[RMDB]
RNA sequence: GGGAACGACUCGAGUAGAGUCGAAAAGCGGCGGGACCUUUUGCUGAUCGAGGGAGAGUCUUGCGUUGCGCUCGAUUACAGCGGCAUGGGACUUCGCAUUGCUUACGGUCAUGCUGGUAUUGAUCCAUGAUGCACGGGUAUUCGUACCCGUGCAUCAAAAAGAAACAACAACAACAAC
Reactivity to DMS in 0.01 (KOAc 150mM, MgCl2 10mM, bicine 150mM(pH8.5), 24C), signal-to-noise 2, nucleotides 027 to 126: g020c020g030g000c000g010g000g000a140c030c020u000u000u000u010g000c000u000g000a100u000c050g000a100g000g000g000a170g010a110g000u000c050u000u000g010c060g050u000u000g010c060g020c040u000c040g000a050u000u010a120c130a060g060c020g000g000c060a040u000g000g000g010a090c100u000u000c040g030c040a040u010u010g030c020u000u000a110c130g000g000u000c070a070u000g000c030u010g020g010u000a110u000u010g000a100u010c020c030a110
Reactivity to 2A3 in 0.01 (KOAc 150mM, MgCl2 10mM, bicine 150mM(pH8.5), 24C), signal-to-noise 1, nucleotides 027 to 126: g000c010g010g000c010g010g010g040a010c000c000u000u020u120u060g000c000u060g040a060u040c020g010a040g010g090g020a150g000a000g100u050c000u060u100g070c060g050u070u160g090c130g010c040u000c010g060a060u090u130a100c020a030g000c000g010g000c080a030u060g000g000g020a030c000u060u040c110g000c000a030u040u200g000c000u010u000a010c030g000g000u030c020a040u110g010c000u060g000g130u080a060u110u070g020a010u040c010c000a050